[RMDB]
RNA sequence: GGGAACGACUCGAGUAGAGUCGAAAACGUUAAUAUCAACAGCUAAGUGCCGUUUGAUGCCAGAUAUACGUUUGCCACCGUCAUAACCGUGAUGCUCCGCCGUAUCGGUAUCUUUAACGCUUUGGGCACCCCUUUUGGAGUUCGCUCCAAAAGGGGUAAAAGAAACAACAACAACAAC
Reactivity to DMS in 0.01 (KOAc 150mM, MgCl2 10mM, bicine 150mM(pH8.5), 24C), signal-to-noise 2, nucleotides 027 to 126: c030g000u000u020a050a070u000a040u020c030a060a030c070a090g000c030u010a090a140g030u010g010c040c030g020u000u000u000g020a030u000g000c000c060a150g000a060u030a080u000a040c050g000u000u000u000g010c020c040a100c120c050g010u020c120a060u000a080a090c110c070g020u020g000a130u000g010c050u000c070c060g030c070c040g020u010a020u020c080g020g010u000a070u000c040u010u000u000a030a080c050g020c040u000u000u000g000g000g020c120
Reactivity to 2A3 in 0.01 (KOAc 150mM, MgCl2 10mM, bicine 150mM(pH8.5), 24C), signal-to-noise 2, nucleotides 027 to 126: c000g010u030u060a110a030u040a090u260c020a040a040c030a020g000c020u070a240a030g090u060g220c090c060g140u050u000u130g040a020u030g030c000c040a020g070a030u100a010u000a100c030g020u000u060u010g060c030c020a060c010c020g060u060c040a120u090a200a060c040c060g050u070g020a050u100g010c020u030c000c060g090c050c030g000u000a000u060c040g020g040u020a030u000c040u000u090u040a080a010c000g020c070u030u080u060g020g010g010c050